This 177-nucleotide RNA was probed chemically with DMS. Values cover nucleotides 27 to 126. The DMS profile rests on 731 reads. Source: RMDB library OK2TST, as collected in RNAgym.

RNA sequence: GGGAACGACUCGAGUAGAGUCGAAAAUUGAAGAAAAUGGCUAGUAUACUUUUGGCGCUUCCUCAUUGUGGUUCAAGAGCUCACUGCAGUGGUAGCAUGUGCUCUCUGAAGACACUAGCAGAGUCAGUCCCUGACCAACGUUCGCGUUGGUCAGGGAAAAAGAAACAACAACAACAAC
Reactivity to DMS in 0.01 (KOAc 150mM, MgCl2 10mM, bicine 150mM(pH8.5), 24C), signal-to-noise 1, nucleotides 027 to 126: u000u020g000a050a140g000a050a010a160a140u000g000g010c020u000a060g020u020a150u000a040c080u000u000u000u000g030g000c020g010c120u010u000c030c040u040c070a120u020u010g040u010g070g030u010u000c060a070a050g000a080g000c020u000c020a000c210u000g010c020a080g010u000g040g040u000a190g040c020a060u000g010u000g040c020u000c000u010c210u000g000a050a040g000a060c040a020c010u000a060g010c120a210g030a030g000u010c020a050g000